[RMDB]
RNA sequence: GGGAACGACUCGAGUAGAGUCGAAAACAGCGUUACACGUUGAUCUGCGGUGUCGCCAGUGAACAGCUUGACGAUUUGCAGCGCACGGUUGAAAGCCUUCUCAACGUUACCGGCAAUCAGCGACAGGCCUUGCUAUGACCUUCGGGUCAUAGCAAGGAAAAGAAACAACAACAACAAC
Reactivity to 2A3 in 0.01 (KOAc 150mM, MgCl2 10mM, bicine 150mM(pH8.5), 24C), signal-to-noise 1, nucleotides 027 to 126: c010a000g010c000g040u050u130a020c120a000c090g030u100u080g010a020u000c040u040g000c030g020g040u010g050u050c020g010c000c060a050g000u010g080a150a100c030a020g010c030u060u070g030a120c010g050a080u100u080u210g010c040a030g000c010g000c000a020c120g010g120u000u080g110a120a040a060g030c000c060u050u000c070u010c010a000a080c080g060u130u030a020c000c000g070g000c000a000a060u010c010a020g060c020g090a070c000a020g070g060
Reactivity to DMS in 0.01 (KOAc 150mM, MgCl2 10mM, bicine 150mM(pH8.5), 24C), signal-to-noise 1, nucleotides 027 to 126: c160a060g000c170g000u000u010a080c110a050c070g080u000u010g000a050u000c050u020g000c070g010g000u000g010u000c030g010c030c030a020g000u000g000a060a080c190a110g040c040u000u020g000a040c080g000a130u000u000u020g000c040a040g020c090g010c080a060c060g000g000u000u000g000a100a100a120g000c000c040u020u000c060u000c050a060a120c080g010u000u000a080c040c020g000g020c040a080a060u000c100a070g000c000g010a080c090a030g000g010
Notes
An RNA of 177 nucleotides, treated with 2A3 and DMS and read out base by base. It was measured as part of the RMDB library OK2TST. The reactions ran in a buffer of 150 mM KOAc, 10 mM MgCl2 and 150 mM bicine (pH 8.5), at 24 C. The DMS profile rests on 965 reads.